[RMDB]
RNA sequence: GGGAACGACUCGAGUAGAGUCGAAAACAAGGCCAUUGGAUGGGGCACGCUCCCUUCUGACUACUCGUCCGCCCCCUCGUAUGAUGGCAUUGUGAUCAAUCACGGUACGUUGCCUGGCGGCCCUUGGGAUGUGAGAACACUUCGGUGUUCUCACAUCAAAAGAAACAACAACAACAAC
Reactivity to 2A3 in 0.01 (KOAc 150mM, MgCl2 10mM, bicine 150mM(pH8.5), 24C), signal-to-noise 2, nucleotides 027 to 126: c010a030a000g050g000c000c020a030u010u050g180g010a040u040g000g050g010g000c060a010c060g080c040u100c000c010c030u080u000c040u060g100a060c010u060a030c030u030c030g030u060c070c030g010c020c000c000c000c020u000c000g090u160a170u300g070a010u020g020g050c020a010u020u090g000u030g050a090u120c070a090a030u070c020a080c130g020g040u120a060c020g090u110u080g020c000c010u000g030g040c000g000g000c070c000c000u020u040g080g070
Reactivity to DMS in 0.01 (KOAc 150mM, MgCl2 10mM, bicine 150mM(pH8.5), 24C), signal-to-noise 2, nucleotides 027 to 126: c010a050a040g020g020c000c020a080u000u010g000g010a030u000g000g010g010g020c040a230c110g010c100u000c010c000c020u000u010c130u010g020a110c050u000a060c050u000c030g020u020c090c110g010c010c000c010c010c040u010c000g020u000a090u010g020a020u000g010g000c020a010u000u000g010u000g010a160u030c090a090a080u010c090a080c100g030g000u000a080c080g020u000u000g000c020c000u010g000g020c060g000g000c010c000c020u010u000g030g000
Structure probing data (2A3 and DMS) for a 177-nucleotide construct. Reactivities are rounded to 0.1 and cut off at 0 and 3. 2A3 adducts were read by reverse transcription with SuperScript II with manganese. It was measured as part of the RMDB library OK2TST. For DMS the reverse transcriptase was MarathonRT. Conditions: 150 mM KOAc, 10 mM MgCl2 and 150 mM bicine (pH 8.5), 24 C.